[RMDB]
RNA sequence: GGGAACGACUCGAGUAGAGUCGAAAACGUCGUGGUCUUCGUCGUUGGCUCUGUGCUGUGCGGGUUAUCGCAGACGAUGACCAUGCUGGCGAUCUCUCGCGCACUGCAGGGCGUCGGUGCCGGUGCGGAUAGGACACGUUUUCGAACGUGUCCUAUCAAAAGAAACAACAACAACAAC
Reactivity to 2A3 in 0.01 (KOAc 150mM, MgCl2 10mM, bicine 150mM(pH8.5), 24C), signal-to-noise 5, nucleotides 027 to 126: c020g040u040c020g020u050g030g060u030c020u060u040c050g040u000c010g050u070u160g120g000c020u020c060u100g070u080g020c010u030g040u040g040c020g000g070g000u080u060a100u100c020g000c030a030g020a090c030g060a120u130g070a050c030c010a010u040g000c010u040g130g040c010g020a050u020c020u000c000u010c010g010c000g000c030a030c020u040g000c020a060g070g030g000c010g020u060c050g020g050u060g020c010c010g000g030u070g040c070g060
Reactivity to DMS in 0.01 (KOAc 150mM, MgCl2 10mM, bicine 150mM(pH8.5), 24C), signal-to-noise 5, nucleotides 027 to 126: c060g010u010c040g020u000g000g000u000c030u000u010c040g010u010c020g000u000u010g020g010c010u000c110u010g030u010g020c190u000g010u000g010c010g010g010g010u010u000a040u000c020g020c040a110g000a070c060g010a070u000g010a070c190c080a040u000g010c080u000g010g010c010g010a060u000c040u010c020u010c020g020c020g010c020a030c020u000g010c040a080g000g000g000c030g010u000c050g010g010u010g020c030c030g010g000u010g010c060g020
An RNA of 177 nucleotides, treated with 2A3 and DMS and read out base by base. For 2A3, 8,491 sequencing reads were counted. The DMS profile rests on 10,147 reads.